Notes:
Chemical mapping of a 177-nucleotide RNA with 2A3 and DMS. The RNA was probed in 150 mM KOAc, 10 mM MgCl2 and 150 mM bicine (pH 8.5) at 24 C. DMS adducts were read by reverse transcription with MarathonRT. It was measured as part of the RMDB library TTRDEL. High DMS reactivity at an A or C suggests that its Watson-Crick edge is free.
[RMDB]
RNA sequence: GGGAACGACUCGAGUAGAGUCGAAAAGAUAUGGACAGAGGCAACAGCCUGUCAGUCGGAAACGACUGCAGGACAUGCCUCGUCCUAAGUCAAAAGUCCCCUUUAAUCUUCGGAUUAAAGGGGACAACACACUUCUAUUCUUCGGAAUAGAAGUGUGAAAAGAAACAACAACAACAAC
Reactivity to 2A3 in 0.01 (KOAc 150mM, MgCl2 10mM, bicine 150mM(pH8.5), 24C), signal-to-noise 2, nucleotides 027 to 126: g010a020u050a030u080g000g010a020c160a180g010a120g000g000c010a060a060c060a300g170c000c000u020g030u300c050a010g000u020c010g000g040a050a040a020c000g000a000c010u000g010c010a010g000g020a040c010a030u020g000c000c000u000c000g000u000c000c000u010a030a020g010u000c020a090a050a040a120g010u000c010c010c000c000u000u000u000a010a000u010c000u020u100c300g130g010a000u010u000a000a010a000g000g000g000g000a000c000a000a000
Reactivity to DMS in 0.01 (KOAc 150mM, MgCl2 10mM, bicine 150mM(pH8.5), 24C), signal-to-noise 2, nucleotides 027 to 126: g000a020u000a270u000g000g000a010c000a080g040a010g010g000c000a030a060c280a150g010c010c000u000g000u010c020a000g020u000c000g000g000a060a100a140c000g010a010c000u000g020c000a000g000g010a070c090a130u010g000c010c000u000c000g000u000c000c000u000a020a070g000u010c020a080a090a140a130g000u000c000c000c000c000u000u000u000a000a000u000c000u000u000c210g020g010a030u000u000a000a010a000g000g010g000g010a000c010a010a060
For DMS, 3,763 sequencing reads were counted. For 2A3 the reverse transcriptase was SuperScript II with manganese.